[RMDB]
Chemical mapping of a 177-nucleotide RNA with DMS and 2A3. For 2A3, 6,183 sequencing reads were counted.

RNA sequence: GGGAACGACUCGAGUAGAGUCGAAAACGCUAUAGAUUCGUCUAUAGCGACUCCUACCCGCCGGCCGGUGCGCGCGGUAGGUGACGCAAACCAGCGUGCGAAAUGUACUGGUUUUCGAACCAGUAAAUUUAGUAAUGCGAUUCGUCGCAUUACUAAAAAAAGAAACAACAACAACAAC
Reactivity to DMS in 0.01 (KOAc 150mM, MgCl2 10mM, bicine 150mM(pH8.5), 24C), signal-to-noise 5, nucleotides 027 to 126: c020g000c000u000a000u000a010g000a040u000u010c180g030u000c000u000a010u000a000g020c000g010a100c060u000c010c010u010a030c020c030c030g020c030c040g020g000c060c060g020g010u010g010c110g010c020g020c120g010g010u000a010g000g010u010g010a060c020g000c030a020a200a300c030c020a120g000c000g010u000g000c080g010a080a110a070u000g000u010a010c010u000g000g010u000u000u000u010c190g010a020a010c000c010a010g000u000a000a030a080
Reactivity to 2A3 in 0.01 (KOAc 150mM, MgCl2 10mM, bicine 150mM(pH8.5), 24C), signal-to-noise 3, nucleotides 027 to 126: c010g000c010u010a000u000a010g020a030u020u060c170g020u000c110u010a000u000a000g000c010g000a010c010u000c010c000u020a020c000c010c020g030c010c020g140g070c040c070g160g110u160g030c130g000c000g000c070g020g010u010a010g010g000u010g050a020c020g000c020a030a000a070c010c010a010g010c020g010u030g010c040g060a120a070a060u200g010u040a010c000u010g000g020u010u000u030u060c140g050a010a000c000c000a000g000u020a030a010a000

For DMS, 5,473 sequencing reads were counted.